[RMDB]
RNA sequence: GGGAACGACUCGAGUAGAGUCGAAAAAGGAUCGCUUGAGGCUAGGAGUUCGACACUAGUCUGGACGACAUAAUGAGACCCCCGUCUCUACAAAAACAAUAAAAAAUGAUGGGACAAGGCUGAGUGGAAGACGGAAGAAGACAGACAUUGUGCCAUAGAGUCAAAAUCGUUUCGACGAUUUUGACUCAAAAGAAACAACAACAACAAC
Reactivity to 2A3 in 0.01 (KOAc 150mM, MgCl2 10mM, bicine 150mM(pH8.5), 24C), signal-to-noise 2, nucleotides 027 to 156: a020g180g020a180u090c040g030c110u170u210g100a000g040g000c030u030a010g000g000a090g090u130u160c140g050a010c030a040c050u010a040g000u060c000u000g040g020a060c000g000a000c010a100u200a220a130u180g010a000g100a110c000c000c000c000c030g000u000c010u000c000u030a010c030a030a030a120a030a000c110a110a080u270a190a090a020a030a030a020u260g080a040u060g060g000g030a000c000a000a000g020g000c010u030g030a050g000u040g010g020a000a180g000a040c030g000g000a050a020g000a050a000g050a060c000a000g040a000c010a030u080u000g010u020g110c040c020a040u120a050